Conditions: 150 mM KOAc, 10 mM MgCl2 and 150 mM bicine (pH 8.5), 24 C.
An RNA of 177 nucleotides, treated with 2A3 and DMS and read out base by base.
DMS (dimethyl sulfate) methylates the pairing face of unpaired adenines and cytosines.
Reactivities are given for positions 27 through 126.
For DMS, 14,487 sequencing reads were counted.
Source: RMDB library M2PK50, as collected in RNAgym.
The 2A3 profile rests on 7,376 reads.
RNA sequence: GGGAACGACUCGAGUAGAGUCGAAAAUUGCAAGCCUUCGGGCUUGCAAGGUGUCGGAAUGCGGAAUAUAUAAUCCUCCGCUUAAGGAUUAUACCGACAUAAGUGCCAGGCUGUUCGCAGCCUGGAAUCCUAUGAUUAACUUCGGUUAAUCAUAGGAAAAAGAAACAACAACAACAAC
Reactivity to 2A3 in 0.01 (KOAc 150mM, MgCl2 10mM, bicine 150mM(pH8.5), 24C), signal-to-noise 5, nucleotides 027 to 126: u050u010g000c000a000a000g000c000c010u040u080c250g090g020g000c000u000u000g010c000a000a010g020g000u010g010u000c000g010g040a140a060u110g060c070g050g130a140a020u190a010u030a000u020a210a060u050c020c030u030c060c040g060c060u040u100a060a020g030g010a010u030u080a040u110a110c000c010g010a000c000a010u130a070a060g100u080g150c000c000a000g000g000c000u010g020u040u060c230g000c100a000g000c000c000u000g000g000a000a020
Reactivity to DMS in 0.01 (KOAc 150mM, MgCl2 10mM, bicine 150mM(pH8.5), 24C), signal-to-noise 8, nucleotides 027 to 126: u000u000g000c010a000a010g000c000c000u000u010c210g040g010g020c000u000u000g010c000a000a000g000g020u000g010u000c010g000g010a170a090u000g000c100g020g000a100a080u010a180u000a050u000a040a050u010c100c040u000c160c170g010c150u000u010a080a060g010g000a060u010u000a040u010a090c010c000g010a010c010a020u010a070a090g010u010g000c000c000a010g000g010c000u000g010u010u010c180g010c010a010g000c000c000u000g000g000a020a040